[RMDB]
RNA sequence: GGGAACGACUCGAGUAGAGUCGAAAAAGAUAUCUGAAAAUUACGAUAUGAUGUUUUUUGAAGUUUUUAAGAUCUUUAUUUGGCCAGCGUGGUUCCUGGAACCUAAAUGGCCAUUACUUAAAGACGAAUUAUGGAUGAUGUUCGCAUCAUCCAUAAUAAAAGAAACAACAACAACAAC
Reactivity to 2A3 in 0.01 (KOAc 150mM, MgCl2 10mM, bicine 150mM(pH8.5), 24C), signal-to-noise 1, nucleotides 027 to 126: a050g080a030u030a020u010c030u060g060a000a170a030a130u190u110a060c080g000a000u000a030u070g120a100u030g010u030u050u060u030u070u120g050a180a040g020u000u000u010u000u000a000a000g000a080u060c060u130u250u050a140u090u020u020g020g000c000c000a020g020c030g080u060g010g020u020u030c020c270u240g020g170a000a000c000c000u060a300a300a000u010g000g000c000c000a000u010u010a010c000u000u000a000a000a010g000a020c010g000a070
Reactivity to DMS in 0.01 (KOAc 150mM, MgCl2 10mM, bicine 150mM(pH8.5), 24C), signal-to-noise 3, nucleotides 027 to 126: a070g000a020u000a000u000c000u020g010a080a120a100a140u000u020a100c160g010a050u000a060u010g000a090u000g000u000u000u000u010u000u020g010a110a230g000u000u010u000u000u000a010a030g000a150u010c090u030u010u000a080u000u000u000g010g000c000c000a010g020c140g000u000g000g010u010u000c000c180u010g020g000a020a000c000c000u000a060a080a050u000g000g010c000c000a000u000u000a040c020u010u000a010a010a000g010a000c010g000a080